[RMDB]
RNA sequence: GGGAACGACUCGAGUAGAGUCGAAAAACAAUCAGCUGGCUCAGAGACACGCCAGAGGAGACGCUAGAGGCCUCCCCACUUGCCUCACAUGUUCAGAUCAGGAACUUCCUGGCCAGGAUGGACAGCAACGCGAACUUGGUUUCGACCAAGUUCGCGUAAAAGAAACAACAACAACAAC
Reactivity to 2A3 in 0.01 (KOAc 150mM, MgCl2 10mM, bicine 150mM(pH8.5), 24C), signal-to-noise 1, nucleotides 027 to 126: a030c020a010a070u080c020a010g000c000u050g030g020c050u260c200a040g020a000g040a230c070a060c100g000c080c000a000g000a000g170g000a050g030a080c090g010c170u150a070g000a000g030g000c000c000u250c030c000c000c000a000c000u020u170g000c040c000u030c010a000c010a000u050g000u030u090c140a090g000a240u080c000a080g000g210a090a160c090u100u020c000c050u000g000g080c000c000a000g040g000a030u040g030g000a020c020a050g000c030a010